[RMDB]
RNA sequence: GGGAACGACUCGAGUAGAGUCGAAAAGAGCAAAAGUUUUAUUCUCAACCUUUCAAUGUUCAACACAACCAUUACUUAAUCAAUUUGUCUGAGCAGACAAACUAUAGUCAAAACUGAAAGAUGCUCCUGCGGGUGAUUGUUUCGACAAUCACCCGCAAAAAGAAACAACAACAACAAC
Reactivity to 2A3 in 0.01 (KOAc 150mM, MgCl2 10mM, bicine 150mM(pH8.5), 24C), signal-to-noise 1, nucleotides 027 to 126: g000a020g000c000a050a030a020a050g070u030u120u290u150a050u000u080c000u000c000a070a000c070c030u030u020u000c000a000a170u000g070u070u160c000a060a060c000a000c000a190a300c160c000a180u020u140a200c080u210u290a110a120u300c000a000a300u000u150u000g000u000c070u100g020a030g120c080a000g030a000c000a000a000a000c030u070a020u110a150g100u120c110a000a000a090a170c000u000g000a000a000a000g050a000u030g020c020u030c000c000
Chemical mapping of a 177-nucleotide RNA with 2A3. 2A3 adducts were read by reverse transcription with SuperScript II with manganese. The RNA was probed in 150 mM KOAc, 10 mM MgCl2 and 150 mM bicine (pH 8.5) at 24 C.